Annotation:
Chemical mapping of a 177-nucleotide RNA with 2A3 and DMS. For 2A3, 1,313 sequencing reads were counted. The RNA was probed in 150 mM KOAc, 10 mM MgCl2 and 150 mM bicine (pH 8.5) at 24 C. Values are in units of 0.01, from 0 to 300, in steps of 10. It was measured as part of the RMDB library OK2TRN.
[RMDB]
RNA sequence: GGGAACGACUCGAGUAGAGUCGAAAAAAAGUCCAUCUCAAUAAAAGGUGGUAGAGUGACCCAGAUGUCCGGCGACUUACCACCUAAAGUCGUCUCCGGUUUUAUUGGUGCCGUGAUCGGAUAUGGACAUACUGGCGGUAUUCGUACCGCCAGUAUGAAAAGAAACAACAACAACAAC
Reactivity to 2A3 in 0.01 (KOAc 150mM, MgCl2 10mM, bicine 150mM(pH8.5), 24C), signal-to-noise 2, nucleotides 027 to 126: a000a000a000g100u000c010c000a050u030c020u020c020a110a160u160a180a220a040a030g020g020u010g010g000u030a050g040a050g250u080g060a090c000c030c000a020g090a140u140g090u050c090c060g060g010c010g050a030c030u020u020a030c000c030a000c000c030u020a010a010a000g010u000c010g020u010c020u010c040c000g000g100u000u010u060u110a120u160u140g120g050u120g090c040c030g040u100g040a060u050c020g000g000a010u040a090u220g020g000a010
Reactivity to DMS in 0.01 (KOAc 150mM, MgCl2 10mM, bicine 150mM(pH8.5), 24C), signal-to-noise 3, nucleotides 027 to 126: a040a050a110g010u010c030c020a060u010c040u000c060a090a080u000a070a090a100a040g010g000u010g010g010u000a070g000a100g020u010g000a190c110c020c030a100g010a130u010g010u010c040c080g040g000c050g000a050c030u010u000a060c060c020a050c030c040u000a040a020a030g020u010c020g000u000c080u010c030c000g010g010u010u000u010u000a080u000u020g010g000u000g000c040c030g020u010g000a060u000c060g010g000a040u010a080u000g010g010a150